[RMDB]
RNA sequence: GGGAACGACUCGAGUAGAGUCGAAAACUUAUCACGCCUGCUUAAGGGCCGCUUGAGGGGUCCUUGGUCAAGUGGCAAUGCCAGUGCCUGGGAAGGCACCCAUUACUUAGCAGAACGUGAAAGGGAGUCUCCCUUUCCUUGGAGGAGUCAGGGAACGCCCUGCUGUAAGGUUCGCCUUACAGCAGGGAAAAGAAACAACAACAACAAC
Reactivity to 2A3 in 0.01 (KOAc 150mM, MgCl2 10mM, bicine 150mM(pH8.5), 24C), signal-to-noise 2, nucleotides 027 to 156: c030u090u060a110u180c000a000c000g020c010c000u010g020c000u090u140a030a000g060g020g010c010c000g050c020u000u010g010a030g040g060g020g080u020c060c040u040u070g050g060u050c020a000a030g000u010g020g020c000a050a020u030g030c050c050a010g000u010g000c010c010u060g000g030g120a070a040g080g000c010a000c000c000c000a010u050u120a040c020u010u020a000g010c000a010g020a060a030c000g010u020g000a030a030a010g010g040g020a060g030u000c020u030c060c000c040u000u030u000c010c010u040u060g090g020a120g050g040a060g050u110c030a010g010g010g000a030a030c020g000
The data come from the RNA Mapping Database (RMDB), library OK3TST.
The record gives the reactivity of an RNA of 207 nucleotides to 2A3.
The reactions ran in a buffer of 150 mM KOAc, 10 mM MgCl2 and 150 mM bicine (pH 8.5), at 24 C.
2A3 adducts were read by reverse transcription with SuperScript II with manganese.